[RMDB]
RNA sequence: GGGAACGACUCGAGUAGAGUCGAAAAGAUAUGGAAAUCCCAGGACAUGCGUGGGAGUCGGAAACGACUCCUGCGCAACAGCCUGUGGAUUUCCUAAGUCAAACGCGAAGGGGUUCGCCCCUUCGCGCCUACCAUUGUUGUUCGCAACAAUGGUAGGAAAAGAAACAACAACAACAAC
Reactivity to DMS in 0.01 (KOAc 150mM, MgCl2 10mM, bicine 150mM(pH8.5), 24C), signal-to-noise 3, nucleotides 027 to 126: g010a030u000a220u010g000g000a020a010a000u000c000c000c010a000g000g000a040c100a120u000g000c000g030u000g000g010g010a020g020u000c010g010g000a060a060a130c000g020a020c000u000c000c000u000g000c010g000c000a010a020c170a170g010c000c010u000g020u020g010g000a010u000u000u000c000c000u000a020a050g000u000c010a100a150a300c030g000c000g020a000a000g020g010g030g020u000u020c300g010c000c000c010c010u010u000c000g000c020g000
Reactivity to 2A3 in 0.01 (KOAc 150mM, MgCl2 10mM, bicine 150mM(pH8.5), 24C), signal-to-noise 3, nucleotides 027 to 126: g000a010u020a020u080g000g000a000a010a010u000c020c010c000a000g000g010a040c150a220u300g000c010g000u010g010g000g000a010g000u000c000g010g000a000a050a020c000g000a000c010u020c010c000u000g020c000g000c010a000a010c010a010g020c000c000u040g000u300g010g000a000u000u000u000c000c000u000a000a000g010u000c030a150a050a070c030g000c010g020a000a000g070g040g030g010u090u230c300g160c000c020c010c020u000u000c000g010c000g010